[RMDB]
RNA sequence: GGGAACGACUCGAGUAGAGUCGAAAAGCUACACUCUUCGGAGUGUAGCAAACCCGAUGAAGCGGCACUUACGGAGCUUCAUACAUCUAAGAGUGCAAAUAUAAAUCGGCGACUUCGGUCGCCGAAACAUUCGUAGGUUGUUCGCAACCUACGAAUGAAAAGAAACAACAACAACAAC
Reactivity to DMS in 0.01 (KOAc 150mM, MgCl2 10mM, bicine 150mM(pH8.5), 24C), signal-to-noise 1, nucleotides 027 to 126: g000c020u010a000c000a000c020u000c000u000u010c140g040g000a070g040u020g000u030a000g010c020a000a040a110c000c000c000g020a030u000g000a020a040g010c020g030g020c020a020c010u000u010a300c130g000g000a190g000c020u000u000c030a050u010a090c100a120u000c140u030a110a060g020a040g020u010g030c010a120a070a070u000a060u050a020a060a120u000c000g010g010c000g010a030c020u000u020c200g040g000u000c000g030c010c000g000a000a000a060
Reactivity to 2A3 in 0.01 (KOAc 150mM, MgCl2 10mM, bicine 150mM(pH8.5), 24C), signal-to-noise 2, nucleotides 027 to 126: g000c000u000a000c000a000c010u000c010u010u080c150g160g000a010g000u000g010u010a000g000c000a000a000a000c000c010c010g020a080u100g010a050a020g040c070g070g040c080a010c050u050u170a050c150g120g100a030g050c020u030u020c010a010u050a030c050a060u100c050u130a080a020g020a030g070u020g000c030a040a160a000u220a030u020a080a140a110u030c010g000g000c000g000a000c000u070u060c170g050g000u000c000g000c000c030g010a000a000a000
Overview
The record gives the reactivity of an RNA of 177 nucleotides to DMS and 2A3. It was measured as part of the RMDB library M2PK50. For 2A3, 1,546 sequencing reads were counted.